[RMDB]
RNA sequence: GGGAACGACUCGAGUAGAGUCGAAAAGGGGUCCAGAGGGCUGUACUAAGACAGCAUAGGACAUGCUCUGAAGCCUCCACGGAGCAACAGCCUAUGUCGAGUACAGCCUCUGGACGGAGGCACCCAAAACGUGCUUAUUGUUCGCAAUAAGCACGAAGAUACGAUUUUUGUUCGCAAAAAUCGUAUCAAAAGAAACAACAACAACAAC
Reactivity to DMS in 0.01 (KOAc 150mM, MgCl2 10mM, bicine 150mM(pH8.5), 24C), signal-to-noise 1, nucleotides 027 to 156: g040g000g040g030u000c010c030a040g010a050g010g020g000c000u020g000u010a040c010u000a210a290g010a150c300a050g000c040a040u010a010g000g020a060c070a300u000g000c010u000c010u000g000a060a220g020c040c010u020c020c040a300c020g000g000a000g040c000a060a070c070a240g000c000c010u000a000u000g010u010c010g000a040g030u000a040c010a000g010c000c000u000c000u010g010g010a030c040g000g030a060g000g000c020a000c050c000c010a000a050a110a180c010g030u000g000c010u010u000a000u000u000g010u000u010c300g030c040a030a000u000a010a010g060c000a020c000g010a020a060
Reactivity to 2A3 in 0.01 (KOAc 150mM, MgCl2 10mM, bicine 150mM(pH8.5), 24C), signal-to-noise 2, nucleotides 027 to 156: g030g000g010g010u000c000c010a000g010a010g050g220g040c020u010g000u010a010c020u110a200a110g020a040c020a030g060c020a050u030a010g020g000a050c090a130u130g010c000u010c010u020g060a150a030g020c010c000u000c020c000a020c030g000g010a010g020c020a020a030c080a050g090c010c000u020a020u020g060u160c010g000a020g000u010a000c000a010g000c000c000u010c000u000g000g000a000c000g000g000a000g000g000c000a060c000c000c000a050a040a010a010c010g000u000g000c000u000u010a010u000u010g070u070u070c140g010c140a000a000u000a000a000g000c000a000c000g000a010a000
Conditions: 150 mM KOAc, 10 mM MgCl2 and 150 mM bicine (pH 8.5), 24 C.
Chemical mapping of a 207-nucleotide RNA with DMS and 2A3.
The DMS profile rests on 1,932 reads.
It was measured as part of the RMDB library RNAMAK.
For DMS the reverse transcriptase was MarathonRT.